Source: RMDB library M2PK50, as collected in RNAgym. Structure probing data (DMS and 2A3) for a 177-nucleotide construct. In probing experiments dimethyl sulfate is read out at A N1 and C N3, which are open when not base-paired. The DMS profile rests on 1,728 reads.
[RMDB]
RNA sequence: GGGAACGACUCGAGUAGAGUCGAAAAAAGGACUGGUUCGCCAGUCCUUAUUCAUUCGUACGCAAGGAAGCGUAAGUCAUUACGCAAAUGACUAAAAGCGUAUACGAAAGGACUUCGGUCCUUUCAAGAAUAAAAACUCUUUCGAGAGUUUUUAUUCAAAAGAAACAACAACAACAAC
Reactivity to DMS in 0.01 (KOAc 150mM, MgCl2 10mM, bicine 150mM(pH8.5), 24C), signal-to-noise 3, nucleotides 027 to 126: a010a010g010g000a010c000u010g000g010u000u010c220g020c000c010a010g000u000c010c010u010u010a010u000u010c030a140u010u010c120g030u000a010c000g020c020a150a100g020g000a170a120g020c010g010u000a040a010g010u020c300a080u000u000a020c040g000c030a080a080a120u010g010a160c070u010a050a040a120a180g010c010g000u000a030u000a110c150g020a010a010a010g000g000a020c000u000u010c180g030g000u000c000c000u000u000u000c010a090a100
Reactivity to 2A3 in 0.01 (KOAc 150mM, MgCl2 10mM, bicine 150mM(pH8.5), 24C), signal-to-noise 1, nucleotides 027 to 126: a000a020g050g010a030c060u040g000g020u030u010c060g040c070c000a000g010u000c010c010u010u000a000u000u030c000a000u020u040c010g020u020a010c040g000c040a080a010g040g100a170a110g090c030g020u000a000a020g170u080c080a120u010u010a000c040g000c040a050a100a250u200g090a080c110u110a000a130a000a110g010c000g000u030a020u030a030c090g010a000a000a010g020g000a000c010u040u060c200g100g000u000c000c000u020u000u000c000a000a000